RNA sequence: GGGAACGACUCGAGUAGAGUCGAAAACUUGGGCACUUCGGUGCCCAAGAAACGCUCAACCUCAGAGCGGAAAAGUCGAACGAAUACAGUUCGACAUGAGGAAAACGGACCCGUUCGCGGGUCCGAAGUGAUAUAUCACGUUCGCGUGAUAUAUCACAAAAGAAACAACAACAACAAC
Reactivity to DMS in 0.01 (KOAc 150mM, MgCl2 10mM, bicine 150mM(pH8.5), 24C), signal-to-noise 3, nucleotides 027 to 126: c000u000u000g000g000g020c010a010c000u000u020c170g000g020u000g040c000c000c000a000a000g000a050a090a120c000g000c010u000c000a040a090c020c000u000c000a000g000a010g020c000g010g000a070a060a010a000g010u000c010g010a010a000c000g030a240a130u000a160c220a140g000u000u000c000g000a010c000a000u020g000a010g000g000a070a050a130a140c030g000g000a000c020c000c000g020u010u000c180g030c010g010g000g000u000c000c000g000a000a020
Reactivity to 2A3 in 0.01 (KOAc 150mM, MgCl2 10mM, bicine 150mM(pH8.5), 24C), signal-to-noise 4, nucleotides 027 to 126: c000u000u000g000g010g000c000a010c010u040u040c230g110g000u000g000c000c000c000a000a000g000a000a000a000c000g000c010u000c010a080a030c010c000u000c000a000g010a000g010c090g030g040a300a300a000a000g000u010c000g010a010a000c000g020a100a030u300a230c100a070g000u000u000c000g000a000c000a000u000g000a010g000g000a040a000a000a020c000g000g000a000c000c030c000g010u030u050c250g010c010g100g010g010u000c000c000g000a010a010